[RMDB]
Structure probing data (2A3) for a 177-nucleotide construct. For 2A3 the reverse transcriptase was SuperScript II with manganese. For 2A3, 1,423 sequencing reads were counted. The RNA was probed in 150 mM KOAc, 10 mM MgCl2 and 150 mM bicine (pH 8.5) at 24 C.
RNA sequence: GGGAACGACUCGAGUAGAGUCGAAAAUGUAUUUUUCUAUAUAGUGCGCAAUAUGUAGGAAUUUGCAGUUAGAUUAGACAGUAUGGGAAGUACACAUGCUGUUUAAUCCCACAAUAAAAACCCUGAGCCAACCCGUGUAAUUCGUUACACGGGUUGGAAAAGAAACAACAACAACAAC
Reactivity to 2A3 in 0.01 (KOAc 150mM, MgCl2 10mM, bicine 150mM(pH8.5), 24C), signal-to-noise 3, nucleotides 027 to 126: u030g000u000a040u010u000u000u000u000c000u000a000u000a020u000a010g150u130g080c110g010c090a080a040u000a010u050g000u000a000g010g010a010a020u020u000u050g000c010a020g030u050u050a010g010a010u000u010a010g000a010c000a000g000u000a000u000g000g060g090a210a110g130u150a070c110a010c000a050u000g020c000u000g000u000u000u000a000a000u000c000c030c000a070c060a020a140u210a060a050a000a060a030c020c000c000u010g050a040g040